Source: RMDB library OK2TRN, as collected in RNAgym. An RNA of 177 nucleotides, treated with DMS and 2A3 and read out base by base. 2A3 adducts were read by reverse transcription with SuperScript II with manganese.
RNA sequence: GGGAACGACUCGAGUAGAGUCGAAAAGCCGAGCGGAAUGAUUUUACCCUUGGUCUGGACGGUCGGCUCGCCGUCCGGAAUGAGAUUCUUCUUCCUGAUGCCGAAGGCCGAGCAAACUUCAUCCAGGGCUCACAUAACGGUUCGCCGUUAUGUGAGCAAAAGAAACAACAACAACAAC
Reactivity to DMS in 0.01 (KOAc 150mM, MgCl2 10mM, bicine 150mM(pH8.5), 24C), signal-to-noise 1, nucleotides 027 to 126: g030c010c020g020a090g010c120g000g020a080a080u030g010a150u000u000u000u000a140c090c030c010u000u010g000g010u060c010u020g000g020a020c120g010g020u000c030g000g000c040u000c020g020c090c000g020u010c020c030g020g000a010a030u010g000a050g000a250u000u020c030u010u000c030u000u000c010c020u010g020a040u000g010c180c020g000a090a110g020g020c050c030g000a070g000c050a040a090a090c120u000u000c030a070u020c060c040a070g050g030
Reactivity to 2A3 in 0.01 (KOAc 150mM, MgCl2 10mM, bicine 150mM(pH8.5), 24C), signal-to-noise 1, nucleotides 027 to 126: g000c020c000g000a010g000c090g000g080a050a070u040g120a140u090u120u090u300a150c050c000c000u030u070g040g020u000c040u000g040g000a010c000g000g080u070c020g010g080c020u030c000g000c010c000g010u000c040c040g000g010a000a030u150g010a020g010a070u220u030c010u070u030c000u010u010c050c000u050g000a000u070g050c040c020g050a040a040g110g060c040c000g000a030g000c020a100a140a030c010u130u080c010a020u030c030c050a020g120g080
Record summary
The reactions ran in a buffer of 150 mM KOAc, 10 mM MgCl2 and 150 mM bicine (pH 8.5), at 24 C.